[RMDB]
RNA sequence: GGGAACGACUCGAGUAGAGUCGAAAAGAGACCCAUUUCCACUGUUGCUAACGACUCCGCGAGGAGGGCGAGUACACUGUGGAGACCGCUGGCGCUAAGUCAGAGGAAGGAUUGGUCGACGGUAGGUAAGGCUAACUCUAUUCGUAGAGUUAGCCUUAAAAGAAACAACAACAACAAC
Reactivity to 2A3 in 0.01 (KOAc 150mM, MgCl2 10mM, bicine 150mM(pH8.5), 24C), signal-to-noise 4, nucleotides 027 to 126: g120a020g030a030c010c010c010a010u070u080u000c000c000a000c000u040g040u080u070g060c010u000a030a020c000g000a000c010u010c000c010g000c040g050a050g020g000a000g030g030g010c000g000a000g000u010a010c010a000c150u000g000u000g000g000a000g000a000c010c010g020c000u000g000g000c010g010c120u250a160a080g020u020c000a000g010a010g020g010a030a050g050g000a090u040u110g010g000u010c040g010a060c040g060g120u200a120g010g150u060
Reactivity to DMS in 0.01 (KOAc 150mM, MgCl2 10mM, bicine 150mM(pH8.5), 24C), signal-to-noise 4, nucleotides 027 to 126: g000a250g000a050c000c010c070a190u020u020u000c000c000a000c010u000g000u020u000g000c020u000a040a040c000g010a140c000u000c000c010g010c300g000a220g030g010a010g010g010g010c010g000a030g010u000a010c170a010c010u000g010u000g010g010a010g000a070c030c030g000c000u000g000g000c010g030c210u020a090a120g040u000c000a010g010a010g010g000a180a050g000g000a120u010u020g020g010u000c020g010a070c080g000g010u020a020g000g000u030

Record summary
Structure probing data (2A3 and DMS) for a 177-nucleotide construct. For DMS the reverse transcriptase was MarathonRT. It was measured as part of the RMDB libraries RFM100 and RFMREP. Values are in units of 0.01, from 0 to 300, in steps of 10.